Structure probing data (2A3 and DMS) for a 207-nucleotide construct.
Reactivities are given for positions 27 through 156.
For 2A3, 865 sequencing reads were counted.
[RMDB]
RNA sequence: GGGAACGACUCGAGUAGAGUCGAAAAUGGUGCAAGCUGGUGUGAGAAACAUGCAAAUGAACACAAAGUACAUGUACUAGAACCAACAACUGAGAAUAUACGAUUGUCCAGACUUCCAAGCGAAUACCGACAACUGAAGAACUGUAGUAUAAGAAUAUCAAAUAGGAUCCUUCGGGAUCCUAUUUGAAAAAGAAACAACAACAACAAC
Reactivity to 2A3 in 0.01 (KOAc 150mM, MgCl2 10mM, bicine 150mM(pH8.5), 24C), signal-to-noise 2, nucleotides 027 to 156: u050g000g040u020g000c010a040a000g010c020u000g000g000u030g010u030g040a070g030a020a140a040c040a050u040g020c020a010a080a160u120g050a190a030c020a010c000a140a110a040g010u030a030c040a070u080g000u000a040c010u000a010g060a010a040c000c000a010a080c000a000a040c080u070g030a020g000a150a030u140a030u050a090c050g070a070u070u050g050u000c010c020a000g020a060c010u100u040c010c010a030a000g090c020g050a050a000u030a070c010c010g080a030c010a070a010c060u090g040a020a000g040a060a040c020u040g030u170a030g030u110a080u130a110a030g230a030a030u300a030
Reactivity to DMS in 0.01 (KOAc 150mM, MgCl2 10mM, bicine 150mM(pH8.5), 24C), signal-to-noise 2, nucleotides 027 to 156: u010g010g020u000g000c000a000a100g080c000u000g070g000u000g010u000g000a180g000a090a140a080c080a010u000g000c040a030a100a120u010g000a100a150c060a190c100a080a100a100g020u000a010c020a090u000g000u010a050c080u000a110g010a100a120c080c000a120a080c060a050a120c050u020g030a130g040a080a130u010a110u010a060c060g030a080u010u010g010u010c000c010a010g000a180c100u000u000c010c030a080a130g000c030g000a110a120u000a110c100c030g010a020c040a080a110c010u030g010a060a100g030a020a080c090u010g010u000a070g010u000a050u000a040a080g000a120a070u000a120
In probing experiments dimethyl sulfate is read out at A N1 and C N3, which are open when not base-paired. It was measured as part of the RMDB library OK3TST.